[RMDB]
RNA sequence: GGGAACGACUCGAGUAGAGUCGAAAAGACAGCUUGUCGUCCAGGCGCAGCUUUUUUUCGUCGACCAGUUUGAGCAACAGCGUCGCGACAUAGGAGAUUGCGACCGCGCCGUUGCGAAAGUGCAUGGUGUCGCUUCAAUGUUCGCAUUGAAGCGACAAAAAGAAACAACAACAACAAC
Reactivity to DMS in 0.01 (KOAc 150mM, MgCl2 10mM, bicine 150mM(pH8.5), 24C), signal-to-noise 2, nucleotides 027 to 126: g020a050c180a040g040c050u030u040g010u020c080g060u000c020c000a100g010g000c080g050c000a080g000c030u040u000u050u000u000u010u000c030g000u000c040g030a110c000c010a180g000u020u070u060g010a270g000c010a040a040c050a110g000c000g000u000c000g040c030g010a020c150a230u040a200g020g000a190g000a190u020u030g000c000g040a020c030c140g000c010g000c140c150g000u020u000g020c000g040a110a000a070g010u050g000c070a020u020g000g020
Reactivity to 2A3 in 0.01 (KOAc 150mM, MgCl2 10mM, bicine 150mM(pH8.5), 24C), signal-to-noise 3, nucleotides 027 to 126: g050a040c010a000g030c120u110u130g040u090c010g020u030c000c000a040g030g060c070g040c030a030g040c030u010u000u090u020u000u090u090c130g030u060c030g050a040c010c010a030g010u010u060u160g120a050g010c020a000a010c000a010g000c000g010u080c000g030c010g020a020c030a070u150a070g230g050a090g150a130u050u040g000c020g000a040c110c030g000c010g030c020c030g000u000u020g010c040g030a030a000a000g150u190g040c030a130u090g020g040
An RNA of 177 nucleotides, treated with DMS and 2A3 and read out base by base. For DMS the reverse transcriptase was MarathonRT. Reactivities are given for positions 27 through 126.